Source: RMDB library OK3TST, as collected in RNAgym. The record gives the reactivity of an RNA of 207 nucleotides to 2A3.
[RMDB]
RNA sequence: GGGAACGACUCGAGUAGAGUCGAAAAUGGAGCUCAAGAAAAUCCAAGCAACAUAUACUGUUAAAUUUCUUUGUUCUUUUCAAAUUUAUAAACGAUGCUUUUUUUGGUAUAUGUCCAUUUCAGAUCAUGGAAAAUGCUGAGAUUAACAAUAUCAUCACGUCUACUAUGGGUUCGCCCAUAGUAGACGAAAAGAAACAACAACAACAAC
Reactivity to 2A3 in 0.01 (KOAc 150mM, MgCl2 10mM, bicine 150mM(pH8.5), 24C), signal-to-noise 2, nucleotides 027 to 156: u120g000g000a030g020c040u050c180a110a010g050a080a050a020a000u020c090c050a060a070g030c020a050a010c020a030u250a020u050a200c030u000g060u100u090a030a130a130u070u050u100c060u120u060u070g010u030u050c040u060u130u040u110c100a170a130a220u120u250u100a140u170a090a100a050c030g060a070u060g070c030u100u170u080u000u020u020u210g030g000u000a010u010a110u060g000u030c050c030a000u020u020u020c070a110g030a180u200c010a050u110g130g040a150a040a000a000u040g000c010u010g010a000g000a050u040u030a020a010c020a090a000u030a010u070c020a000u040c020a000

Overview: 2A3 adducts were read by reverse transcription with SuperScript II with manganese.